[RMDB]
This 207-nucleotide RNA was probed chemically with 2A3 and DMS. For 2A3 the reverse transcriptase was SuperScript II with manganese. For DMS the reverse transcriptase was MarathonRT. Values cover nucleotides 27 to 156.
RNA sequence: GGGAACGACUCGAGUAGAGUCGAAAAGAAACGCAAGGCCGCUGACCGACGGGAUAUUGUGGGGCUUACCACAGUGGACGCGGCGUUAUCACUUGCCUUUUAAGCCGACCGUCUGGGCUGCAUACAAACCACCCAACUAUCUUCGGAUAGUUGGGAACUCUUAUUUACCGUUCGCGGUAAAUAAGAGAAAAGAAACAACAACAACAAC
Reactivity to 2A3 in 0.01 (KOAc 150mM, MgCl2 10mM, bicine 150mM(pH8.5), 24C), signal-to-noise 4, nucleotides 027 to 156: g010a010a050a010c080g000c030a020a000g100g000c000c010g020c060u070g070a070c010c050g050a010c020g040g030g020a070u100a040u170u040g010u020g010g020g080g090c130u120u130a060c010c000a010c010a030g010u030g060g020a040c040g000c010g010g020c010g020u040u040a070u100c030a030c080u010u030g000c000c010u090u160u050u110a070a020g000c010c010g040a060c020c000g010u010c020u040g020g040g000c020u030g010c030a060u110a110c050a050a090a050c040c010a040c010c020c000a000a000c000u000a000u010c000u020u020c060g060g000a000u000a000g000u000u000g000g000g000a000a010
Reactivity to DMS in 0.01 (KOAc 150mM, MgCl2 10mM, bicine 150mM(pH8.5), 24C), signal-to-noise 2, nucleotides 027 to 156: g040a070a060a100c100g030c050a110a090g050g040c040c040g010c040u010g030a130c030c000g000a070c000g000g010g040a170u000a030u000u000g040u000g010g020g020g030c180u000u020a030c010c000a020c000a040g010u000g030g000a300c060g000c010g030g020c010g020u010u020a070u000c100a130c010u010u010g020c010c040u030u010u000u000a050a160g000c040c020g020a080c030c020g010u000c020u010g010g020g010c050u010g020c060a110u000a100c060a060a090a110c040c030a120c010c000c000a000a020c000u000a010u000c000u000u020c290g030g010a020u000a010g010u000u000g010g010g010a010a010